[RMDB]
RNA sequence: GGGAACGACUCGAGUAGAGUCGAAAAGUAUUUUUUUUUAGCAUUACCAUAUCCUAUUUGGCAAUGAAUUUCAUAUACUAGAGUAUGUUCUUAAGAUUGGAUUGUCUAAAGUGAAAUUCAUUGCCAAGCAUUAUACGUUGUUCGCAACGUAUAAUGCAAAAGAAACAACAACAACAAC
Reactivity to 2A3 in 0.01 (KOAc 150mM, MgCl2 10mM, bicine 150mM(pH8.5), 24C), signal-to-noise 2, nucleotides 027 to 126: g000u020a110u030u140u030u030u000u000u030u080u110a060g020c020a040u030u040a060c030c000a040u050a070u140c010c010u050a130u260u040u020g010g010c000a000a000u000g000a000a010u000u000u000c010a010u090a040u010a210c060u030a020g010a010g120u090a060u150g030u050u010c010u050u100a180a150g030a290u110u150g030g000a010u060u030g020u060c000u030a000a000a080g000u000g000a000a010a000u000u000c010a000u000u000g020c000c000a000a010
Reactivity to DMS in 0.01 (KOAc 150mM, MgCl2 10mM, bicine 150mM(pH8.5), 24C), signal-to-noise 1, nucleotides 027 to 126: g010u010a000u000u000u000u000u000u000u000u000u000a120g000c110a070u010u000a060c050c020a070u010a080u000c060c020u000a060u000u000u000g000g000c000a010a000u000g000a030a010u000u000u010c010a020u000a130u010a110c170u000a020g000a020g010u000a070u010g010u000u000c000u020u000a070a130g030a120u000u010g000g000a040u010u000g000u000c010u000a020a040a200g000u000g000a010a020a000u000u000c000a010u000u000g000c000c000a000a000